[RMDB]
RNA sequence: GGGAACGACUCGAGUAGAGUCGAAAAGCGUACUACUAUAUCUCCAGCUAUGAAGGGUCGGAACUACUCUAUCCCAAAUAGGAUAGAGCCGACCUGGAGCUGGAGGGAGUAUAGUAUCGCAAAGGUAUAUUACCUUGUUCGCAAGGUAAUAUACCAACAGGAAUUUAUGGUUCGCCAUAAAUUCCUGAAAAGAAACAACAACAACAAC
Reactivity to DMS in 0.01 (KOAc 150mM, MgCl2 10mM, bicine 150mM(pH8.5), 24C), signal-to-noise 2, nucleotides 027 to 156: g050c020g040u010a020c000u000a020c010u010a080u000a020u000c010u000c010c000a030g020c010u000a120u010g010a250a300g000g040g020u000c040g020g000a090a130c120u010a300c010u000c010u020a000u000c000c000c020a040a130a250u010a080g000g000a010u010a010g000a020g000c040c000g000a020c000c010u000g000g000a030g000c010u000g010g010a010g000g000g010a300g020u000a020u000a030g000u000a020u000c000g060c010a090a080a110g000g030u010a000u000a010u000u000a000c010c000u000u000g000u000u000c300g050c000a020a010g020g010u000a000a010u000a000u000a000c000c000a030a060
Reactivity to 2A3 in 0.01 (KOAc 150mM, MgCl2 10mM, bicine 150mM(pH8.5), 24C), signal-to-noise 5, nucleotides 027 to 156: g000c010g060u030a060c010u000a000c010u010a030u090a250u300c010u010c010c000a000g000c010u090a200u300g040a050a020g010g000g000u000c000g000g040a070a070c110u200a050c000u290c010u000a010u030c000c020c040a160a300a170u290a090g000g000a000u010a000g000a000g000c000c000g000a000c000c010u000g000g000a000g000c000u000g010g000a000g000g010g000a050g000u010a000u000a000g010u000a020u300c020g000c010a050a040a020g000g000u000a000u000a000u000u010a000c010c010u010u010g020u030u090c230g010c130a000a000g000g000u000a000a000u000a000u000a000c000c000a000a010
Chemical mapping of a 207-nucleotide RNA with DMS and 2A3.
For 2A3 the reverse transcriptase was SuperScript II with manganese.
For DMS the reverse transcriptase was MarathonRT.
Conditions: 150 mM KOAc, 10 mM MgCl2 and 150 mM bicine (pH 8.5), 24 C.